RNA sequence: GGGAACGACUCGAGUAGAGUCGAAAAACGAGAGCUUCAGAGUCUUUACAGCAGAAACCUGGGAGUUCUUCCCAGUCAACAAGAGAAUUAAAUUCAGAGUUAUGGAUCCAGCAGUUGGUCUAGGAAAUACACCAAUUAGAUUCGUCUAAUUGGUGUAAAAAGAAACAACAACAACAAC
Reactivity to DMS in 0.01 (KOAc 150mM, MgCl2 10mM, bicine 150mM(pH8.5), 24C), signal-to-noise 7, nucleotides 027 to 126: a090c140g010a070g000a050g000c010u000u000c030a060g010a140g010u000c030u000u010u010a090c100a100g020c130a070g000a080a090a090c230c020u010g000g010g000a040g010u020u010c090u000u000c010c000c000a070g010u000c080a030a070c100a060a070g010a110g010a060a050u010u000a030a070a230u010u010c030a080g000a130g000u010u010a080u000g010g000a060u000c020c030a060g010c080a070g010u000u000g010g000u010c030u000a090g010g010a050a080a160
Reactivity to 2A3 in 0.01 (KOAc 150mM, MgCl2 10mM, bicine 150mM(pH8.5), 24C), signal-to-noise 3, nucleotides 027 to 126: a000c080g020a030g010a010g070c000u030u040c020a040g020a030g120u010c030u070u170u090a150c080a030g110c030a050g120a080a060a030c030c000u010g000g040g040a020g020u100u060c000u040u000c020c000c000a000g060u080c030a020a040c010a030a040g080a020g080a140a100u170u130a120a100a080u100u080c040a040g010a010g150u060u090a060u080g010g010a030u040c030c000a000g050c040a030g080u120u110g040g010u000c020u020a040g010g120a050a030a000
Chemical mapping of a 177-nucleotide RNA with DMS and 2A3. The DMS profile rests on 8,402 reads. Values cover nucleotides 27 to 126.